[RMDB]
RNA sequence: GGGAACGACUCGAGUAGAGUCGAAAAGGCCCACUCCAUUGCAUGAGUUAGCAUCAGAGGAGGUCAAACUAGAGUGACUUCAUCUUGAAUAUGGGCUAGGUAAGAAGAGGAUGAGGCCUGCUGGGCUGCAUUCCCAGGAGGUUAGGCAUUUGUAGUCGUGACAACGAUAGUUCGCUAUCGUUGUCACAAAAGAAACAACAACAACAAC
Reactivity to 2A3 in 0.01 (KOAc 150mM, MgCl2 10mM, bicine 150mM(pH8.5), 24C), signal-to-noise 1, nucleotides 027 to 156: g120g000c020c000c000a020c000u070c000c080a080u100u290g000c020a010u080g030a030g110u060u040a040g000c010a040u010c020a020g030a050g050g010a020g040g000u020c050a080a100a110c060u150a070g010a010g190u040g000a020c000u000u000c020a040u050c010u100u120g040a130a090u130a120u190g040g000g000c060u040a040g000g060u080a120a030g000a030a000g030a000g070g000a020u030g030a040g090g000c000c010u060g050c010u040g000g010g000c020u180g000c080a040u140u120c010c000c000a000g030g020a010g010g000u040u070a060g030g000c040a050u000u050u240g130u020a080g010u100c120
Chemical mapping of a 207-nucleotide RNA with 2A3.
For 2A3 the reverse transcriptase was SuperScript II with manganese.